RNA sequence: GGGAACGACUCGAGUAGAGUCGAAAAAAUGUAAAAGAAAAGCUGGUCUAACAAGAUGACAACUAGAACAAAGGGCAGGGGCCAUACUGCGGCCACGACUCAAAACGACAGAAUGCCAGGCCCUGAGGUAUAGUUAGCGUUUCGACGCUAACUAUACAAAAGAAACAACAACAACAAC
Reactivity to DMS in 0.01 (KOAc 150mM, MgCl2 10mM, bicine 150mM(pH8.5), 24C), signal-to-noise 4, nucleotides 027 to 126: a090a030u030g010u010a030a080a140a080g000a100a070a070a070g000c090u000g000g020u020c030u020a120a070c130a100a030g000a080u000g010a050c130a070a060c020u000a050g000a070a110c090a050a070a040g000g000g000c010a040g000g030g010g050c020c070a040u020a020c090u020g020c080g000g000c020c020a060c070g000a040c080u010c080a040a020a030a100c080g020a100c030a060g000a150a040u010g000c020c030a020g010g010c000c010c010u050g000a070g010
Reactivity to 2A3 in 0.01 (KOAc 150mM, MgCl2 10mM, bicine 150mM(pH8.5), 24C), signal-to-noise 3, nucleotides 027 to 126: a000a000u270g000u130a100a180a010a040g160a010a100a000a000g090c080u090g050g030u020c030u110a080a100c090a050a020g010a180u120g030a010c030a040a010c040u070a040g050a170a020c030a020a150a030g020g010g000c010a020g060g010g000g060c020c010a020u090a080c030u090g010c000g000g020c040c010a050c030g060a070c010u060c080a000a100a000a040c040g130a040c000a020g070a150a020u060g020c010c000a010g020g020c000c000c000u040g020a090g070